Notes: An RNA of 177 nucleotides, treated with 2A3 and DMS and read out base by base. The DMS profile rests on 8,148 reads. For 2A3 the reverse transcriptase was SuperScript II with manganese.
[RMDB]
RNA sequence: GGGAACGACUCGAGUAGAGUCGAAAAUCGGCCGGGCGGCCUAUUACGGUUAGUUGAGAAGCUAGUGGAUCAGUCGGAAAUUAGAUUCUAUAUGGUUACGUGCGACAGAUUCUGCGUUUCGGCAGAAGGGUAUAAUAAACUUCGGUUUAUUAUACCCAAAAGAAACAACAACAACAAC
Reactivity to 2A3 in 0.01 (KOAc 150mM, MgCl2 10mM, bicine 150mM(pH8.5), 24C), signal-to-noise 2, nucleotides 027 to 126: u030c000g010g000c000c000g000g030g040c020g010g020c010c000u000a020u000u090a030c050g040g010u040u040a030g050u070u060g040a030g020a090a000g020c050u070a020g080u040g020g010a050u020c040a030g040u030c020g040g050a000a020a130u070u040a040g050a100u130u000c040u040a150u000a040u260g020g000u020u060a010c050g030u050g040c010g010a020c000a010g090a060u080u060c010u010g000c000g080u070u060u120c030g020g000c000a000g030a110a030
Reactivity to DMS in 0.01 (KOAc 150mM, MgCl2 10mM, bicine 150mM(pH8.5), 24C), signal-to-noise 3, nucleotides 027 to 126: u010c010g010g000c000c000g000g010g000c010g000g010c000c000u000a010u000u000a010c020g000g000u000u000a060g010u000u000g000a110g000a130a090g000c040u000a050g000u000g000g010a060u010c030a090g010u010c060g000g000a090a060a100u030u030a070g010a070u010u030c070u010a090u020a090u000g010g010u000u020a050c080g010u010g000c030g000a060c060a050g000a120u010u000c010u000g020c030g010u020u020u020c050g020g000c010a030g000a050a050